[RMDB]
Overview:
An RNA of 177 nucleotides, treated with DMS and read out base by base. The reactions ran in a buffer of 150 mM KOAc, 10 mM MgCl2 and 150 mM bicine (pH 8.5), at 24 C. Values cover nucleotides 27 to 126.
RNA sequence: GGGAACGACUCGAGUAGAGUCGAAAAAUGAGAAAUGCUAAAGAACCGUAUAUGCCGAGAUACGGCCGUCAGCGUAAUUUACGAGACCAGAGUCUUGCUCGGGUUGCUUUUGAUUUCUAUGAAGUUAGCGAUGUAGUGAUUUCGAUCACUACAUCGCAAAAGAAACAACAACAACAAC
Reactivity to DMS in 0.01 (KOAc 150mM, MgCl2 10mM, bicine 150mM(pH8.5), 24C), signal-to-noise 1, nucleotides 027 to 126: a110u000g010a140g000a090a110a030u020g000c010u010a000a270a110g020a060a070c060c030g040u020a060u000a020u010g010c130c020g000a040g010a070u010a070c120g050g020c020c010g000u000c110a060g060c050g010u000a040a110u000u020u030a120c040g020a190g000a070c010c110a120g010a210g000u000c100u000u030g020c060u000c050g010g000g000u000u000g000c040u020u010u000u010g010a070u000u000u000c010u010a050u020g000a110a050g010u000u000a130